This 177-nucleotide RNA was probed chemically with 2A3. For 2A3 the reverse transcriptase was SuperScript II with manganese. It was measured as part of the RMDB library OK1LIB.
[RMDB]
RNA sequence: GGGAACGACUCGAGUAGAGUCGAAAAUGGUUCUACAUAGCUUUUUCUGUCAAUUCCAGUAACUGAACCAUCUGUCAAGACAACUAUCCCUAUUGUAGAAUGGUCUUUUAUAACUUUUUUAGUUCCUGGAUGAUACCUCAUUCGUGAGGUAUCAUCCAAAAGAAACAACAACAACAAC
Reactivity to 2A3 in 0.01 (KOAc 150mM, MgCl2 10mM, bicine 150mM(pH8.5), 24C), signal-to-noise 3, nucleotides 027 to 126: u070g080g000u040u000c010u010a040c040a200u120a060g030c000u050u140u070u250u060c070u090g100u100c090a050a150u080u090c010c020a080g030u120a050a060c050u090g030a040a040c010c020a020u040c030u030g110u080c040a000a100g070a030c040a040a040c080u060a110u150c030c000c000u010a040u000u170g030u010a020g000a110a030u040g110g000u040c050u050u060u030u060a140u030a110a070c060u000u030u000u050u080u140a000g000u010u010c010c090u070